[RMDB]
RNA sequence: GGGAACGACUCGAGUAGAGUCGAAAAACUGCCUGUUUCGACAGGCAGUAGUCUACUUCGCGCAACCGCCGAGUCGUUCCCGCGGUAGCGUGAAGUAGUUUGAUAUGAUCUUAUUCGUAAGAUCAAAACAUUGUACCUGUUUCGACAGGUACAAUGUAAAAGAAACAACAACAACAAC
Reactivity to DMS in 0.01 (KOAc 150mM, MgCl2 10mM, bicine 150mM(pH8.5), 24C), signal-to-noise 4, nucleotides 027 to 126: a030c000u000g020c000c000u000g010u000u000u010c190g010a040c000a020g010g010c000a000g000u000a030g010u000c000u000a010c010u000u000c010g010c010g010c000a100a010c010c000g020c010c250g000a170g010u000c000g000u000u000c000c000c000g020c020g010g010u000a060g000c000g020u000g000a010a000g000u000a010g010u000u000u010g010a140u010a120u000g000a000u000c000u010u000a030u000u000c170g000u000a000a010g010a000u000c000a050a060a130
Reactivity to 2A3 in 0.01 (KOAc 150mM, MgCl2 10mM, bicine 150mM(pH8.5), 24C), signal-to-noise 2, nucleotides 027 to 126: a000c000u000g020c000c010u020g020u010u090u090c250g090a020c000a000g010g020c000a000g000u000a000g000u010c000u000a000c010u000u000c010g000c020g000c030a040a010c010c020g040c050c170g200a060g040u000c000g000u010u000c000c000c000g030c000g000g000u000a010g000c010g010u000g000a000a010g000u010a000g000u000u080u110g050a030u040a070u160g000a000u000c010u010u030a030u040u100c150g070u040a010a000g010a000u010c000a000a050a000

This 177-nucleotide RNA was probed chemically with DMS and 2A3. Source: RMDB library M2PK50, as collected in RNAgym. For DMS, 5,854 sequencing reads were counted. DMS adducts were read by reverse transcription with MarathonRT. Conditions: 150 mM KOAc, 10 mM MgCl2 and 150 mM bicine (pH 8.5), 24 C. Values cover nucleotides 27 to 126.